[RMDB]
Structure probing data (DMS and 2A3) for a 177-nucleotide construct. For 2A3 the reverse transcriptase was SuperScript II with manganese. Values cover nucleotides 27 to 126. For 2A3, 1,284 sequencing reads were counted.
RNA sequence: GGGAACGACUCGAGUAGAGUCGAAAAACUUUUAGCGAUUAUCGUUAUAGAAAUGUCCUUGGCAUAUCGCUAUGCACAGAGGUAUUAGUAGCGCAAUAGCUAUAGAAGGACAUUACCUCUCAAAUAAUAAAUUCUAGUUGUUCGCAACUAGAAUUUAAAAAGAAACAACAACAACAAC
Reactivity to DMS in 0.01 (KOAc 150mM, MgCl2 10mM, bicine 150mM(pH8.5), 24C), signal-to-noise 3, nucleotides 027 to 126: a070c060u000u000u000u000a020g010c010g030a170u010u000a070u000c040g030u010u000a060u010a060g000a070a050a040u000g010u000c000c000u000u000g000g020c050a060u010a020u000c060g010c030u000a010u010g010c130a100c160a080g000a050g000g000u000a090u000u000a150g010u000a010g000c030g030c240a060a080u000a120g020c000u000a040u010a080g000a060a050g000g010a030c030a010u000u000a030c060c060u010c050u010c070a070a070a080u010a060a130
Reactivity to 2A3 in 0.01 (KOAc 150mM, MgCl2 10mM, bicine 150mM(pH8.5), 24C), signal-to-noise 2, nucleotides 027 to 126: a000c010u110u120u010u010a040g020c010g020a030u050u200a140u300c010g020u050u020a050u040a090g070a040a080a020u020g000u000c000c000u010u050g040g000c040a060u020a020u240c030g000c000u000a000u010g050c080a040c010a080g220a100g110g120u150a110u130u120a090g100u030a020g040c000g000c030a040a130u000a030g000c000u000a010u040a130g190a080a010g010g000a020c010a010u010u070a070c020c000u000c000u010c070a090a120a040u120a140a010